[RMDB]
RNA sequence: GGGAACGACUCGAGUAGAGUCGAAAAGAUGGGUGUGAAGCCCGCGUGGGACGCGAUGCAGCGCGGCGUGCAGGACACCCUGUUCGCCGGUCUCGCCGAGCGACUCCCGCAGCUCGCCGACACGUGGCUCCCACGACUCGGCGGCGCCCUGCGCACCGCCAUAUCAGACAUUCGUGUCUGAUAUGGCAAAAGAAACAACAACAACAAC
Reactivity to 2A3 in 0.01 (KOAc 150mM, MgCl2 10mM, bicine 150mM(pH8.5), 24C), signal-to-noise 1, nucleotides 027 to 156: g150a050u170g000g020g010u020g000u060g210a190a030g020c050c080c020g010c000g000u020g000g020g000a020c000g000c010g070a090u150g100c070a050g010c080g000c000g090g010c010g000u000g000c000a000g000g060a080c010a100c020c010c000u000g000u000u010c000g000c000c000g000g110u070c040u030c040g010c020c030g000a020g000c000g030a060c060u020c010c010c010g010c000a000g000c000u000c020g000c040c010g020a010c030a000c180g010u040g050g030c120u090c040c060c000a010c000g060a080c000u020c040g000g000c000g000g000c030g040c010c000c020u020g000c050g000c060a070c040c040